[RMDB]
Background
The data come from the RNA Mapping Database (RMDB), library OK1LIB. An RNA of 177 nucleotides, treated with DMS and 2A3 and read out base by base. Values cover nucleotides 27 to 126.
RNA sequence: GGGAACGACUCGAGUAGAGUCGAAAAAUGAACGGGGUUAUCGGCGAGAGCAUGACAAUCCACUCGGUGAGAUACUUGCGGAGCACCCAUGCGGCCUCUGGCGUCGUGCCACGCACCUCGAGGUAGCCCGACUGGAGUACUUCGGUACUCCAGUCGGAAAAGAAACAACAACAACAAC
Reactivity to DMS in 0.01 (KOAc 150mM, MgCl2 10mM, bicine 150mM(pH8.5), 24C), signal-to-noise 2, nucleotides 027 to 126: a040u030g000a150a120c180g000g000g010g000u010u050a000u000c020g000g030c040g040a040g000a230g000c070a020u000g000a060c280a060a110u040c030c090a080c020u000c130g000g020u000g020a020g010a080u000a030c070u000u000g000c010g000g000a030g030c110a080c300c000c000a060u010g010c000g000g000c190c020u020c000u010g000g000c100g020u060c180g020u000g000c070c050a000c140g070c030a110c100c020u030c070g000a100g000g010u000a050g000c010
Reactivity to 2A3 in 0.01 (KOAc 150mM, MgCl2 10mM, bicine 150mM(pH8.5), 24C), signal-to-noise 2, nucleotides 027 to 126: a060u130g020a070a040c030g010g030g000g060u160u060a060u170c030g140g020c040g130a100g000a000g030c080a030u070g020a040c040a040a100u030c020c030a070c010u120c060g160g040u100g010a090g010a060u140a110c020u100u240g070c040g010g000a020g000c060a030c000c000c000a000u130g040c010g030g010c020c000u050c040u050g000g050c040g000u210c030g060u200g010c010c000a010c020g000c020a010c020c000u030c010g000a070g000g040u000a000g050c010
DMS adducts were read by reverse transcription with MarathonRT. As a SHAPE reagent, 2A3 marks flexible, mostly unpaired nucleotides at the ribose 2'-OH.